[RMDB]
RNA sequence: GGGAACGACUCGAGUAGAGUCGAAAAGCAUGGGAAUGAAAUGGACAGUUGGAUAGUGGGGCUGGCUCAUUGGGUUAAACUAUCCUAGGAGAUAGCAUCUUGAUAUAAAUCAACAAGUAAGCGUGUGAGACCCGCUAAAAUUCGUUUUAGCGGGUCUAAAAGAAACAACAACAACAAC
Reactivity to DMS in 0.01 (KOAc 150mM, MgCl2 10mM, bicine 150mM(pH8.5), 24C), signal-to-noise 1, nucleotides 027 to 126: g010c090a060u000g040g010g010a140a100u020g010a030a060a100u020g020g030a080c040a040g000u020u000g020g020a060u000a040g000u030g000g020g000g040c110u000g000g010c060u010c080a100u000u010g010g020g010u010u000a070a100a130c050u000a010u000c010c000u000a140g000g000a060g000a020u000a000g020c090a110u000c060u000u000g000a060u000a170u010a050a090a100u030c060a020a030c090a070a050g000u000a030a050g010c130g010u000g040u000g000